[RMDB]
RNA sequence: GGGAACGACUCGAGUAGAGUCGAAAACUUUUGACCCACGGGCAGCACGGUGUUCACGUACUGGUACCGCGGAUGCCAACGGUACUCGGGAACGUAGAUGGGCGCCGGGCGACCCAUCACCUCGCUCCAUAACCUCUUGGCCAGUUGGACCGCGGCGAAAAUACGCAAGUUUCGACUUGCGUAUUUUAAAAGAAACAACAACAACAAC
Reactivity to 2A3 in 0.01 (KOAc 150mM, MgCl2 10mM, bicine 150mM(pH8.5), 24C), signal-to-noise 3, nucleotides 027 to 156: c020u060u060u070u230g120a110c030c010c010a000c060g020g040g020c040a030g000c020a020c050g040g030u010g060u180u130c050a040c080g050u080a050c050u080g090g000u070a020c000c000g030c020g030g060a060u150g170c010c000a020a010c010g030g000u060a150c030u040c110g020g000g010a060a100c040g010u070a100g000a070u020g000g050g010c030g000c060c120g100g070g020c040g040a140c040c000c000a010u010c000a030c000c010u090c020g030c010u000c030c000a040u120a220a130c020c020u110c020u060u030g000g000c020c020a130g010u020u030g000g020a000c000c000g010c010g010g000c010g000
Reactivity to DMS in 0.01 (KOAc 150mM, MgCl2 10mM, bicine 150mM(pH8.5), 24C), signal-to-noise 2, nucleotides 027 to 156: c070u000u020u010u000g020a190c010c020c010a110c150g010g030g000c000a020g070c010a030c000g030g000u000g000u000u010c050a070c060g000u000a080c030u000g020g030u000a070c000c020g030c000g010g010a130u000g000c020c000a070a020c050g010g030u020a040c040u010c140g030g020g020a030a020c020g020u000a140g000a060u000g020g030g010c010g070c020c160g010g050g040c020g000a050c000c010c000a070u000c000a040c060c090u010c030g050c010u020c020c010a140u010a120a110c020c020u000c050u020u000g030g000c000c000a180g020u000u000g000g000a140c070c000g010c030g010g020c020g000